[RMDB]
The data come from the RNA Mapping Database (RMDB), library OK2TST. The record gives the reactivity of an RNA of 177 nucleotides to 2A3 and DMS. Reactivities are given for positions 27 through 126. For DMS the reverse transcriptase was MarathonRT.

RNA sequence: GGGAACGACUCGAGUAGAGUCGAAAACUAUGCAUUCACAAGUUCAACAGGAUCGGUUAAUUCUUAAUGUGAAACAAAUUAGGGAAAUUAAGAGACAAGUGAGUACAAGUAGUACUGACUUAGAGCAACUAUGACCUCACUUCGGUGAGGUCAUAGUAAAAGAAACAACAACAACAAC
Reactivity to 2A3 in 0.01 (KOAc 150mM, MgCl2 10mM, bicine 150mM(pH8.5), 24C), signal-to-noise 1, nucleotides 027 to 126: c030u050a040u170g000c000a100u000u090c080a040c030a060a050g060u020u070c040a080a000c010a020g020g020a060u080c060g090g120u050u060a060a060u150u050c010u030u010a060a010u100g030u010g100a040a020a070c020a030a120a060u180u120a080g010g000g120a070a040a020u100u070a220a000g060a000g020a020c010a040a000g060u020g070a030g010u030a020c020a120a100g130u110a000g030u010a270c020u010g070a000c020u060u040a010g030a000g080c010a020
Reactivity to DMS in 0.01 (KOAc 150mM, MgCl2 10mM, bicine 150mM(pH8.5), 24C), signal-to-noise 2, nucleotides 027 to 126: c020u020a050u000g020c050a070u000u000c020a050c040a080a160g010u000u020c010a090a080c130a070g000g020a060u010c100g000g010u000u010a070a030u030u000c030u000u010a060a080u010g020u010g010a090a050a110c150a030a100a070u000u010a070g030g010g000a040a030a060u000u000a040a060g000a040g000a090c120a030a030g010u000g000a010g000u010a020c040a120a190g010u000a080g020u000a040c030u010g010a010c030u000u010a010g010a150g030c130a050